RNA sequence: GGGAACGACUCGAGUAGAGUCGAAAAACUCUGCAUUGUUCGAUGUAGUGGCUUUGGAGUUGAAACUACUAACCGGAGACAUCAGCGUGGUGCAAAUACCACCCGAACAACUAGUAAUAGUAGUUUCCAUCACACGCUAGUUCGCUAGCGUGUGAUGAAAAGAAACAACAACAACAAC
Reactivity to DMS in 0.01 (KOAc 150mM, MgCl2 10mM, bicine 150mM(pH8.5), 24C), signal-to-noise 2, nucleotides 027 to 126: a050c040u000c030u000g040c090a160u000u000g000u000u000c040g010a110u000g030u000a090g000u010g000g020c020u010u000u010g010g000a120g010u000u000g010a030a040a000c010u000a010c010u000a040a160c070c010g020g000a040g010a060c140a010u000c060a040g010c200g000u010g010g000u000g000c150a080a060a110u010a030c010c000a000c000c040c010g000a020a020c050a040a110c150u000a100g000u000a090a090u000a020g000u000a020g000u000u000u000c020
Reactivity to 2A3 in 0.01 (KOAc 150mM, MgCl2 10mM, bicine 150mM(pH8.5), 24C), signal-to-noise 2, nucleotides 027 to 126: a000c010u030c020u020g000c020a050u000u040g040u060u070c060g040a050u100g070u210a100g040u010g070g000c040u030u040u010g060g000a060g000u040u050g060a020a030a010c020u050a010c010u020a070a020c020c010g000g010a020g000a010c010a020u070c030a030g080c030g090u010g000g000u030g030c060a040a120a120u130a080c000c010a000c000c030c020g010a020a010c010a000a020c040u100a030g070u120a030a160u000a090g010u000a000g010u010u000u000c010
This 177-nucleotide RNA was probed chemically with DMS and 2A3.
The reactions ran in a buffer of 150 mM KOAc, 10 mM MgCl2 and 150 mM bicine (pH 8.5), at 24 C.
For DMS the reverse transcriptase was MarathonRT.